[RMDB]
RNA sequence: GGGAACGACUCGAGUAGAGUCGAAAAGCGUACUACGUAUCGCCGUCUAAAGGCGAUAAGCUGCUUCCCAAAUAGGAAGCAGCUUUUGACGCCUGGACGGAACUACGAUACGUAUCGCAAACCUACUGAGAUGCAGUUCGCUGCAUCUCAGUAGGAACAUUGAAGUUUUGUUCGCAAAACUUCAAUGAAAAGAAACAACAACAACAAC
Reactivity to 2A3 in 0.01 (KOAc 150mM, MgCl2 10mM, bicine 150mM(pH8.5), 24C), signal-to-noise 4, nucleotides 027 to 156: g000c000g030u070a090c030u000a020c050g000u010a010u000c000g010c010c000g000u000c020u130a300a110a030g000g000c010g010a020u020a000a000g000c000u000g000c010u030u000c000c000c060a140a300a080u300a060g000g000a010a000g010c000a010g000c000u000u000u000u020g020a000c000g010c020c000u010g000g010a000c050g020g020a030a030c060u200a020c060g000a000u010a000c000g010u010a010u080c000g000c010a040a040a080c000c000u000a000c000u000g010a000g020a010u000g000c000a000g020u050u150c230g080c180u000g000c000a000u000c000u000c000a000g000u000a010g010g000a010a000
Reactivity to DMS in 0.01 (KOAc 150mM, MgCl2 10mM, bicine 150mM(pH8.5), 24C), signal-to-noise 3, nucleotides 027 to 156: g030c020g020u000a050c070u010a020c000g030u000a020u000c010g000c000c000g000u000c030u000a020a080a040g040g040c000g020a100u000a000a020g050c000u010g020c010u000u000c000c000c020a060a150a220u010a030g010g010a010a020g010c000a000g030c000u000u000u000u000g020a150c020g000c000c000u000g010g010a040c000g010g020a030a060c040u000a220c000g010a010u000a010c010g000u000a010u000c010g030c000a070a070a120c010c000u000a010c020u000g000a020g030a040u000g000c000a030g030u000u000c300g020c010u000g010c020a020u000c000u000c000a000g020u000a020g000g010a040a080